[RMDB]
RNA sequence: GGGAACGACUCGAGUAGAGUCGAAAACGGCAAGUCUGAAUCCGGAUCCAUCGGCCUAGGCUUUGCCAUCCCUUCCAACUUUGCUCGUCGCGUAGCCAGCCAGCUCAUUGAGAAGGGUUAUGCCACCCGACACGGUAACGUUCGCGUUACCGUGUCGAAAAGAAACAACAACAACAAC
Reactivity to DMS in 0.01 (KOAc 150mM, MgCl2 10mM, bicine 150mM(pH8.5), 24C), signal-to-noise 2, nucleotides 027 to 126: c270g000g000c000a000a030g000u000c000u030g030a160a270u000c020c010g000g000a190u020c210c210a130u000c000g020g000c250c100u000a120g000g000c000u010u020u000g040c010c000a100u000c010c010c010u000u010c020c030a030a060c210u000u010u000g000c000u000c140g000u010c060g010c040g000u000a050g020c150c060a070g010c080c080a040g020c020u010c070a090u000u000g000a100g000a060a100g000g000g000u000u010a120u020g010c070c060a130c060c090
Reactivity to 2A3 in 0.01 (KOAc 150mM, MgCl2 10mM, bicine 150mM(pH8.5), 24C), signal-to-noise 1, nucleotides 027 to 126: c020g000g010c000a000a040g020u080c000u050g050a040a060u050c010c020g000g040a080u220c120c000a140u180c030g000g000c030c040u050a030g000g010c000u140u070u090g010c000c000a010u020c010c010c000u030u020c000c000a020a020c090u070u040u050g000c000u030c090g070u040c050g070c030g100u070a050g100c030c020a000g010c000c010a020g010c020u030c010a040u030u200g030a100g040a150a070g000g000g050u020u030a070u050g030c000c010a030c000c000
Structure probing data (DMS and 2A3) for a 177-nucleotide construct. The DMS profile rests on 1,116 reads. 2A3 adducts were read by reverse transcription with SuperScript II with manganese. The RNA was probed in 150 mM KOAc, 10 mM MgCl2 and 150 mM bicine (pH 8.5) at 24 C. It was measured as part of the RMDB library OK2TST.